[RMDB]
RNA sequence: GGGAACGACUCGAGUAGAGUCGAAAAUAAUGUCAUAGCCAUUGUAAUGUCAUAGUGCAUUACCUUUUUCUAUGUUUAGACGUGGUUAGGUACACAAAUACCAUUGUGUUACAGUUGUCCAUUAUAUUCAGUACAGUAACUUGCUGUGUAGGUUUGAGUACCCAUCAUGAUUCGUCAUGAUGGGUACAAAAGAAACAACAACAACAAC
Reactivity to DMS in 0.01 (KOAc 150mM, MgCl2 10mM, bicine 150mM(pH8.5), 24C), signal-to-noise 3, nucleotides 027 to 156: u000a080a060u000g030u010c020a100u000a050g000c160c300a070u010u000g020u010a010a020u000g000u000c050a200u000a190g040u010g060c020a030u000u000a040c020c090u010u000u000u020u000c000u000a050u000g010u000u010u000a100g030a100c090g010u010g010g020u000u010a050g000g020u000a050c020a050c020a040a050a110u000a300c110c030a260u000u010g030u000g000u000u000a060c050a120g020u000u000g020u000c060c040a080u000u010a090u000a070u010u000c060a110g000u000a030c040a080g000u010a050a120c030u000u000g010c010u020g040u000g020u000a110g020g030u000u000u040g000a250
Reactivity to 2A3 in 0.01 (KOAc 150mM, MgCl2 10mM, bicine 150mM(pH8.5), 24C), signal-to-noise 3, nucleotides 027 to 156: u120a000a050u140g130u110c030a010u010a010g010c060c020a030u020u050g010u010a010a020u020g020u030c140a300u170a210g050u150g250c000a020u030u020a050c010c000u030u190u030u040u030c020u050a000u010g020u030u130u110a040g030a140c060g030u060g010g060u080u060a080g050g050u050a020c010a010c010a050a020a020u140a060c010c020a010u010u020g020u000g010u020u050a010c020a070g020u050u040g010u090c040c020a030u150u080a110u060a060u140u100c040a020g020u040a060c000a060g060u050a100a220c090u150u240g000c000u020g030u050g030u110a090g040g140u020u000u010g050a020
An RNA of 207 nucleotides, treated with DMS and 2A3 and read out base by base. Conditions: 150 mM KOAc, 10 mM MgCl2 and 150 mM bicine (pH 8.5), 24 C. 2A3 adducts were read by reverse transcription with SuperScript II with manganese. For DMS, 4,542 sequencing reads were counted.